[RMDB]
Chemical mapping of a 170-nucleotide RNA with 2A3 and DMS.
RNA sequence: GGGAACGACUCGAGUAGAGUCGAAAACUGUAGGAUCCGCCGCCCAAGCCCGAACUGAGCCAAGUCCGAGCGAAGGGUCCGCGUGGGGAGGAAACGCAACCCGAGAGUGAGAUGAACGACAAGGGGCAUAGAUUACAGUUCGCUGUAAUCAAAAGAAACAACAACAACAAC
Reactivity to 2A3 in 0.01 (KOAc 150mM, MgCl2 10mM, bicine 150mM(pH8.5), 24C), signal-to-noise 9, nucleotides 027 to 129: c020u040g080u170a050g010g030a020u030c040c050g020c010c000g030c000c020c010a020a020g030c010c010c010g020a040a010c030u040g020a010g040c020c020a060a010g020u000c010c010g010a000g000c020g020a040a050g010g000g000u020c000c030g040c030g030u090g010g010g000g000a030g010g000a010a030a010c070g000c050a050a050c010c000c000g020a030g000a010g040u100g010a070g000a090u120g050a090a040c050g060a030c060a040a040g020g000g010g010c010a030u110a080
Reactivity to DMS in 0.01 (KOAc 150mM, MgCl2 10mM, bicine 150mM(pH8.5), 24C), signal-to-noise 9, nucleotides 027 to 129: c030u030g010u050a030g000g000a030u000c010c040g000c060c050g010c040c010c030a080a180g020c040c010c030g010a060a050c120u020g000a010g030c000c040a080a090g030u030c000c040g010a070g020c030g000a030a050g040g000g020u010c020c020g000c090g000u000g000g020g000g030a020g000g000a030a040a060c050g000c050a080a060c010c030c010g000a100g020a050g040u020g020a070g020a040u030g010a080a070c110g010a060c080a070a110g000g000g000g000c090a050u060a050
Source information: Conditions: 150 mM KOAc, 10 mM MgCl2 and 150 mM bicine (pH 8.5), 24 C. It was measured as part of the RMDB library 15KLIB. The 2A3 profile rests on 44,461 reads.